[RMDB]
Description: An RNA of 177 nucleotides, treated with DMS and read out base by base. Source: RMDB library 15KREP, as collected in RNAgym. The reactions ran in a buffer of 150 mM KOAc, 10 mM MgCl2 and 150 mM bicine (pH 8.5), at 24 C. DMS adducts were read by reverse transcription with MarathonRT. Values cover nucleotides 27 to 126.
RNA sequence: GGGAACGACUCGAGUAGAGUCGAAAAGGGCUCCCCCCAUAAGAUGACGAGGACCCCACUCAUCGGGGUCCGCAGUCUCAUCCUUUCUUACCUGAUGGCCGGCAUGGUCCCAGCCUCCUCGCUGGCGGUCUGAACUAAAGUUCGCUUUAGUUCAGACAAAAGAAACAACAACAACAAC
Reactivity to DMS in 0.01 (KOAc 150mM, MgCl2 10mM, bicine 150mM(pH8.5), 24C), signal-to-noise 1, nucleotides 027 to 126: g010g010g000c050u010c000c000c000c000c000c000a190u010a090a080g000a010u000g000a020c020g000a250g000g010a030c000c000c000c000a150c200u010c160a080u010c100g000g020g030g000u000c000c000g020c120a120g000u000c100u000c010a070u000c060c110u000u000u000c060u020u000a200c050c050u000g010a100u010g000g030c030c030g000g000c000a150u000g000g000u000c020c010c010a080g000c020c000u000c000c010u020c090g000c020u020g000g020c100g010